This 177-nucleotide RNA was probed chemically with DMS and 2A3. The data come from the RNA Mapping Database (RMDB), library OK2TRN. 2A3 adducts were read by reverse transcription with SuperScript II with manganese. For DMS the reverse transcriptase was MarathonRT. The RNA was probed in 150 mM KOAc, 10 mM MgCl2 and 150 mM bicine (pH 8.5) at 24 C.
RNA sequence: GGGAACGACUCGAGUAGAGUCGAAAAGGGCUGAAUCCGUUCCAGAUUGGUGACAGCGAUGAUAAGACGUUGAUGUCUUUCCUUAAAGCCUGGGUUAAGCGUUGCGCGGUUCACGCCAAUGGGGACACAAUUUACUCGAAUUCGUUCGAGUAAAUUGAAAAGAAACAACAACAACAAC
Reactivity to DMS in 0.01 (KOAc 150mM, MgCl2 10mM, bicine 150mM(pH8.5), 24C), signal-to-noise 9, nucleotides 027 to 126: g010g010g010c030u010g000a090a090u010c080c060g020u000u000c030c030a100g010a110u010u010g010g010u000g010a210c050a060g010c030g010a080u010g010a120u000a050a070g010a030c010g010u000u010g010a100u010g010u000c020u000u000u000c030c040u000u000a080a070a090g010c040c010u000g010g010g010u000u000a080a070g010c050g000u000u000g010c070g020c040g000g010u000u010c150a110c090g010c020c020a030a050u000g010g000g010g000a090c120a230
Reactivity to 2A3 in 0.01 (KOAc 150mM, MgCl2 10mM, bicine 150mM(pH8.5), 24C), signal-to-noise 5, nucleotides 027 to 126: g040g000g000c040u060g050a040a030u050c060c020g000u050u000c020c000a030g070a230u110u140g040g000u030g020a040c040a020g030c030g060a090u090g020a040u060a170a030g040a020c040g050u090u150g110a120u140g020u000c000u030u020u020c010c000u060u130a130a070a030g020c010c010u050g020g000g070u060u120a100a000g030c040g030u060u070g030c030g020c020g030g070u100u140c090a060c080g010c000c000a000a040u050g000g000g010g030a000c020a000